[RMDB]
RNA sequence: GGGAACGACUCGAGUAGAGUCGAAAAUGGACGGCGAAAGAAUAGGAGCUGACAGGACACCGAAGCUUCUAGGAGUAACAUUCCAGUGUCUGCAAGGGAUGGCAACACAUGCGGCCGAAACGAGACGUGCACUGCUAUCCUUCGGGAUAGCAGUGCAAAAAGAAACAACAACAACAAC
Reactivity to 2A3 in 0.01 (KOAc 150mM, MgCl2 10mM, bicine 150mM(pH8.5), 24C), signal-to-noise 1, nucleotides 027 to 126: u150g070g050a040c000g080g080c060g060a030a040a080g080a000a030u040a000g020g010a050g040c000u040g020a150c030a080g040g030a100c030a090c100c120g030a000a000g040c000u070u090c030u030a030g000g000a080g040u180a030a030c000a030u140u000c000c060a000g000u000g100u000c030u050g000c030a120a000g000g000g090a060u010g010g010c000a000a000c000a020c000a000u110g110c020g090g010c010c020g000a030a040a000c000g000a000g030a000c050g000
Reactivity to DMS in 0.01 (KOAc 150mM, MgCl2 10mM, bicine 150mM(pH8.5), 24C), signal-to-noise 2, nucleotides 027 to 126: u000g000g050a140c070g000g000c000g080a100a070a070g000a120a100u000a000g000g000a000g140c020u000g000a060c300a130g010g000a150c260a150c020c060g030a270a230g000c000u000u000c020u000a050g000g000a110g020u010a060a190c050a040u030u010c000c020a150g000u000g070u020c030u000g000c070a070a030g020g000g040a030u010g000g000c090a040a020c000a010c110a090u000g020c060g010g030c000c000g000a070a100a050c130g010a080g020a010c130g070
Chemical mapping of a 177-nucleotide RNA with 2A3 and DMS. The data come from the RNA Mapping Database (RMDB), library OK1LIB. Conditions: 150 mM KOAc, 10 mM MgCl2 and 150 mM bicine (pH 8.5), 24 C. For 2A3 the reverse transcriptase was SuperScript II with manganese.